[RMDB]
RNA sequence: GGGAACGACUCGAGUAGAGUCGAAAAAAAGGCCCAUCGAACCGGGCAACAGCUGGUUCCAACCGAAACAUGUCGAAGCAUGACCUCUGCCGAGGUAGUUCGUGGGGUAGAGCGACCGAUUGGGGAGGUAGCCUAUUUGCUUCGGCAAAUAGGCUACAAAAGAAACAACAACAACAAC
Reactivity to 2A3 in 0.01 (KOAc 150mM, MgCl2 10mM, bicine 150mM(pH8.5), 24C), signal-to-noise 3, nucleotides 027 to 126: a000a010a010g180g010c000c000c000a030u080c060g010a020a010c060c020g020g000g030c070a070a070c020a070g090c020u060g000g020u050u000c070c000a070a120c040c010g090a190a030a000c040a070u070g000u040c040g090a050a030g040c050a030u110g040a060c000c020u000c020u090g090c040c030g020a020g020g030u030a010g010u000u000c080g020u120g050g010g000g040u060a060g000a020g050c080g010a030c020c000g130a200u080u110g000g000g000g000a030g060
Reactivity to DMS in 0.01 (KOAc 150mM, MgCl2 10mM, bicine 150mM(pH8.5), 24C), signal-to-noise 2, nucleotides 027 to 126: a000a070a000g050g000c010c000c010a060u020c200g010a050a030c030c030g040g000g030c090a060a100c240a090g050c010u000g030g010u000u020c070c210a080a170c130c010g000a090a020a130c110a020u000g040u010c070g020a070a090g070c040a060u000g020a050c040c020u020c000u050g000c120c010g050a150g000g050u010a040g000u000u010c060g010u050g020g040g000g030u020a050g000a120g010c000g000a000c030c000g010a110u030u010g000g040g020g000a050g020
Structure probing data (2A3 and DMS) for a 177-nucleotide construct. Reactivities are rounded to 0.1 and cut off at 0 and 3. Values cover nucleotides 27 to 126. Source: RMDB library RFM100, as collected in RNAgym. For 2A3, 1,458 sequencing reads were counted.